This 177-nucleotide RNA was probed chemically with 2A3 and DMS.

[RMDB]
RNA sequence: GGGAACGACUCGAGUAGAGUCGAAAACAUCUGUGGAGAAUGCCCAGCAGGAUAAGGGUGUUGCUAUCCCCCAUGACAUUGACCUUGGUGACUCGCGCGUGGUCAUCCAGGAUUAUGAUAAUCAGCAUAAGUCCAUUUUAUUCGUAAAAUGGACUUAAAAAGAAACAACAACAACAAC
Reactivity to 2A3 in 0.01 (KOAc 150mM, MgCl2 10mM, bicine 150mM(pH8.5), 24C), signal-to-noise 3, nucleotides 027 to 126: c020a040u080c040u070g100u110g080g060a080g040a170a090u130g020c050c030c000a030g080c040a030g050g090a030u060a150a090g020g010g010u040g010u040u070g030c010u070a130u250c010c020c000c020c030a050u080g020a010c010a030u040u090g040a040c000c010u000u010g000g020u010g020a010c000u010c040g070c010g010c020g130u070g000g000u000c010a000u000c000c000a000g000g020a020u050u030a010u030g030a000u040a080a040u040c070a020g010c000a030
Reactivity to DMS in 0.01 (KOAc 150mM, MgCl2 10mM, bicine 150mM(pH8.5), 24C), signal-to-noise 9, nucleotides 027 to 126: c070a060u010c050u000g020u000g010g010a130g010a100a080u010g010c030c020c030a160g010c090a070g010g000a120u000a090a140g000g000g010u000g000u000u000g010c050u000a110u000c020c000c000c060c050a140u010g010a110c050a030u000u000g020a050c010c000u000u000g000g010u000g000a020c010u000c080g010c150g010c110g020u010g000g000u000c000a010u000c010c030a030g000g000a090u000u000a020u000g010a120u010a050a060u000c070a040g010c100a130

DMS adducts were read by reverse transcription with MarathonRT. Conditions: 150 mM KOAc, 10 mM MgCl2 and 150 mM bicine (pH 8.5), 24 C. The DMS profile rests on 18,214 reads. The 2A3 profile rests on 4,148 reads.